Source information:
An RNA of 177 nucleotides, treated with DMS and 2A3 and read out base by base. DMS adducts were read by reverse transcription with MarathonRT. It was measured as part of the RMDB library OK2TST.

RNA sequence: GGGAACGACUCGAGUAGAGUCGAAAAAGACGAUGAUGAGGCAUUUGUAGACGAGCAGCUUCUAACAGAUUUCCAUUUGGGCAAUGCCAUCAAUCUGGACAUCAUAGACAGCGUGGUAACUGGAGCAAACCAAACAUUAAUUCGUUAAUGUUUGGUUAAAAGAAACAACAACAACAAC
Reactivity to DMS in 0.01 (KOAc 150mM, MgCl2 10mM, bicine 150mM(pH8.5), 24C), signal-to-noise 9, nucleotides 027 to 126: a080g010a080c080g010a070u000g010a070u000g010a110g010g010c050a070u000u000u000g020u010a060g010a090c090g010a080g010c060a080g010c050u000u000c050u010a070a100c120a080g000a070u000u000u000c040c040a100u000u000u000g010g000g010c050a070a070u000g010c020c010a060u000c100a050a050u000c070u000g000g010a060c080a040u000c050a090u000a070g000a060c090a040g000c060g020u000g000g010u000a050a090c060u000g000g000a080g010c140a100
Reactivity to 2A3 in 0.01 (KOAc 150mM, MgCl2 10mM, bicine 150mM(pH8.5), 24C), signal-to-noise 9, nucleotides 027 to 126: a000g060a020c040g030a050u090g010a020u050g020a030g030g000c030a050u020u070u170g060u060a030g020a070c040g020a030g030c020a010g000c020u040u000c010u030a080a050c020a070g030a050u040u040u000c020c020a030u070u050u060g030g010g000c070a120a110u160g030c010c000a050u090c020a020a060u030c040u030g010g020a010c010a030u050c010a020u030a040g050a040c040a020g010c030g050u030g030g020u040a060a030c040u040g020g050a030g030c030a030
2A3 adducts were read by reverse transcription with SuperScript II with manganese. High DMS reactivity at an A or C suggests that its Watson-Crick edge is free.